RNA sequence: GGGAACGACUCGAGUAGAGUCGAAAAAUCACAUCACUUCUGUCAACUACGGUAUUUCUCAUGAUGGUUGCUGAAGGAAUGCCUCCGACAGCCGAAGCACUUCCACUUAUCGGAAUUUAUUUUGGCGGGAUUAGUCGUGAUUCGUCACGACUAAUCCAAAAGAAACAACAACAACAAC
Reactivity to 2A3 in 0.01 (KOAc 150mM, MgCl2 10mM, bicine 150mM(pH8.5), 24C), signal-to-noise 6, nucleotides 027 to 126: a000u120c040a030c020a100u040c050a010c030u030u000c010u040g130u190c020a020a030c010u050a020c030g120g010u100a240u090u210u020c190u060c100a180u130g130a110u040g070g000u030u030g000c010u010g010a010a000g010g010a030a030u080g020c040c030u020c070c020g060a100c100a010g010c000c000g040a030a000g020c020a030c060u020u010c020c000a030c070u170u200a140u290c080g060g000a050a030u020u030u020a090u010u060u090u040g060g010c050g000
Reactivity to DMS in 0.01 (KOAc 150mM, MgCl2 10mM, bicine 150mM(pH8.5), 24C), signal-to-noise 1, nucleotides 027 to 126: a030u050c160a160c080a000u000c190a070c000u000u000c010u000g000u050c020a000a000c000u000a020c160g000g010u000a130u000u030u000c130u040c130a150u000g050a270u040g000g030u000u000g060c000u000g000a050a000g000g000a110a000u000g050c000c000u000c010c000g020a200c070a240g000c030c010g040a030a090g000c120a040c090u000u000c000c000a000c080u050u070a050u000c190g090g040a000a030u070u010u000a060u220u000u000u000g070g010c010g020